This 177-nucleotide RNA was probed chemically with DMS and 2A3. For 2A3 the reverse transcriptase was SuperScript II with manganese. The reactions ran in a buffer of 150 mM KOAc, 10 mM MgCl2 and 150 mM bicine (pH 8.5), at 24 C. 2A3 is a SHAPE reagent: it acylates the 2'-hydroxyl of flexible nucleotides of all four kinds. For DMS the reverse transcriptase was MarathonRT.
[RMDB]
RNA sequence: GGGAACGACUCGAGUAGAGUCGAAAACUGUGAGCUACUUCAGCCUAACGAAACCAGCACUGGGGAACGUUACCAACGAGAAUUCAUGCUGGUGAACCGAGCGUUAAACCUCAAACGUCUCCAGGAACGAUAUGCGAGUAUUCGUACUCGCAUAUCGAAAAGAAACAACAACAACAAC
Reactivity to DMS in 0.01 (KOAc 150mM, MgCl2 10mM, bicine 150mM(pH8.5), 24C), signal-to-noise 4, nucleotides 027 to 126: c060u010g000u010g010a070g010c030u010a110c080u030u030c100a040g000c050c000u020a070a110c130g010a110a180a090c050c010a020g040c050a070c240u000g000g000g000g000a100a180c030g000u010u000a150c280c270a060a050c050g000a100g000a130a240u010u010c060a080u000g000c000u010g000g020u000g000a020a100c150c100g000a050g010c000g000u010u020a060a030a070c040c000u010c070a070a070a090c050g020u000c000u000c000c030a090g000g010a040a180
Reactivity to 2A3 in 0.01 (KOAc 150mM, MgCl2 10mM, bicine 150mM(pH8.5), 24C), signal-to-noise 8, nucleotides 027 to 126: c030u050g030u080g090a040g020c030u090a040c050u110u100c060a020g030c010c010u050a090a050c070g080a130a030a020c010c000a020g020c010a030c160u030g010g010g000g040a070a070c010g020u040u130a200c040c060a050a030c050g020a020g090a170a050u100u020c020a020u060g000c010u010g000g020u000g010a040a020c040c020g030a010g020c010g000u000u060a060a070a070c000c000u020c040a050a040a030c040g020u020c010u000c020c020a030g030g060a080a020